Structure probing data (2A3) for a 207-nucleotide construct.

RNA sequence: GGGAACGACUCGAGUAGAGUCGAAAAGAACACGUCGCGGGACGACGCUAAACUCGCCCUGGUCGGGAUGGGUUUAACGACCCCUCGGGUUUCCUAGUUCCUAAAACUAGGUGGUGGAGUCAUAUAAAAAACUUCUACACGUUCGCGUGUAGAAGAAGUAACCUAAGGUGUUCGCACCUUAGGUUACAAAAGAAACAACAACAACAAC
Reactivity to 2A3 in 0.01 (KOAc 150mM, MgCl2 10mM, bicine 150mM(pH8.5), 24C), signal-to-noise 2, nucleotides 027 to 156: g030a040a070c100a000c100g080u060c000g000c060g010g020g050a050c040g070a080c000g070c060u020a000a010a090c010u020c030g080c000c000c030u170g110g180u150c090g000g010g050a130u100g020g000g000u000u000u030a010a010c010g030a030c000c000c020c000u000c000g020g000g010u000u000u000c010c000u010a000g010u020u000c000c000u050a000a000a020a030c010u000a030g020g000u000g030g030u040g020g080a090g040u130c160a030u120a010u300a200a130a010a010a010a070c000u000u010c000u010a000c020a000c000g070u090u070c240g000c020g070u000g000u010a000g010a000a000g000a000a000

Conditions: 150 mM KOAc, 10 mM MgCl2 and 150 mM bicine (pH 8.5), 24 C. The data come from the RNA Mapping Database (RMDB), library M2RFPK. Reactivities are given for positions 27 through 156.